[RMDB]
RNA sequence: GGGAACGACUCGAGUAGAGUCGAAAAGAAUAGAAUUGACCAAAAGACCUUUUCUCUAAUCUGUUGCUCAAUUAUGUACACUAUGCAAAAUAAUCCAACUAACAGACAAGCAUUGAUUAUGAAACUUUCUAGUAUUUUCCAGCUAAUUGCAUUAAAACUGAGAACAAUAGUUCGCUAUUGUUCUCAGAAAAGAAACAACAACAACAAC
Reactivity to 2A3 in 0.01 (KOAc 150mM, MgCl2 10mM, bicine 150mM(pH8.5), 24C), signal-to-noise 5, nucleotides 027 to 156: g010a030a080u140a050g050a050a060u060u090g020a050c040c020a000a000a080a080g060a050c010c040u050u060u140u040c070u030c030u100a070a150u030c030u070g050u060u070g050c020u010c050a030a120u110u050a060u200g060u050a020c030a010c080u090a030u070g030c030a040a090a020a090u070a030a060u010c050c030a040a050c030u070a030a050c020a040g180a090c050a090a000g060c030a030u010u070g030a040u060u140a030u120g010a040a090a040c030u090u140u010c040u060a020g010u020a060u070u050u040u030c010c000a000g030c010u060a100a090u120u140g020c080a030u240u260a030a050a180a040
Reactivity to DMS in 0.01 (KOAc 150mM, MgCl2 10mM, bicine 150mM(pH8.5), 24C), signal-to-noise 2, nucleotides 027 to 156: g010a150a150u000a110g020a100a060u010u000g020a130c030c030a080a120a140a120g000a050c030c020u010u000u000u000c030u010c050u010a110a110u000c030u010g010u000u000g030c010u010c030a020a050u010u000a070u000g020u020a050c060a100c080u000a080u000g030c040a030a060a120a060u000a040a110u000c040c090a030a080c070u080a080a150c070a070g030a070c060a020a080g050c080a080u010u020g000a070u000u000a040u000g000a150a060a100c030u000u000u000c020u010a090g000u000a070u000u000u000u000c000c020a250g020c040u020a060a060u000u000g000c060a050u020u000a020a050a090a170